[RMDB]
RNA sequence: GGGAACGACUCGAGUAGAGUCGAAAAAAAUUGGACAAACAACAAAGAUCGGGAGACUGUGCACGGUUACCAAGGAAUCCAGGGUAGAUAUCGAUAAAACUCUGGUGAUGUCAACAAUGCGUAUUUAGUACUCAGUAUCAUUCGUGAUACUGAGUACAAAAGAAACAACAACAACAAC
Reactivity to 2A3 in 0.01 (KOAc 150mM, MgCl2 10mM, bicine 150mM(pH8.5), 24C), signal-to-noise 4, nucleotides 027 to 126: a000a000a000u090u050g050g000a020c030a020a110a010c020a010a020c020a040a180a030g060a100u080c060g020g040g010a100g010a050c020u040g020u060g050c050a030c080g030g000u020u010a030c020c010a040a030g100g030a060a020u000c000c000a010g010g020g000u020a020g090a150u090a060u190c060g030a010u100a050a060a010a010c020u010c000u030g030g060u030g030a030u070g060u040c020a020a020c020a040a130u110g020c010g040u110a070u120u100u070a030
Reactivity to DMS in 0.01 (KOAc 150mM, MgCl2 10mM, bicine 150mM(pH8.5), 24C), signal-to-noise 4, nucleotides 027 to 126: a050a090a050u020u010g010g010a080c070a070a060a050c090a060a060c100a080a120a090g020a080u000c070g010g000g010a130g000a060c070u000g000u000g000c070a030c150g010g000u000u000a080c040c040a050a060g020g010a110a060u000c010c010a030g010g010g000u010a040g000a070u010a300u010c090g010a080u000a060a110a050a010c010u000c020u000g020g010u000g000a070u010g010u000c060a030a050c090a020a030u000g010c080g030u010a050u000u010u000a140